[RMDB]
RNA sequence: GGGAACGACUCGAGUAGAGUCGAAAAUUACACUGAGAGCAUUUAGCGUGAUUACUCUUUAAAUCAAAUCAGGCAAUAGAGAGAAACUCGAGAGGUGAAAACCCCACAGCAUUCUGAAAUGUAUUUGAAGGCAACGCUACCUUCGGGUAGCGUUGAAUCAGUACGAAUCGUUCGCGAUUCGUACUGAAAAAGAAACAACAACAACAAC
Reactivity to 2A3 in 0.01 (KOAc 150mM, MgCl2 10mM, bicine 150mM(pH8.5), 24C), signal-to-noise 1, nucleotides 027 to 156: u020u000a090c040a000c060u060g020a010g000a040g120c000a030u040u000u170a060g020c100g010u060g060a010u020u090a090c000u040c020u060u110u200a040a070a100u180c170a090a090a000u000c000a020g000g080c010a050a090u100a020g060a000g040a000g020a070a160a000c000u000c010g110a070g000a010g030g020u020g060a030a050a020a020c000c010c040c000a070c030a000g130c000a050u060u210c040u140g070a110a060a100u110g000u060a150u020u150u140g050a080a040g020g000c000a000a000c000g000c000u000a000c000c010u060u000c090g070g000g000u000a000g000c010g000u000u000g000a000a000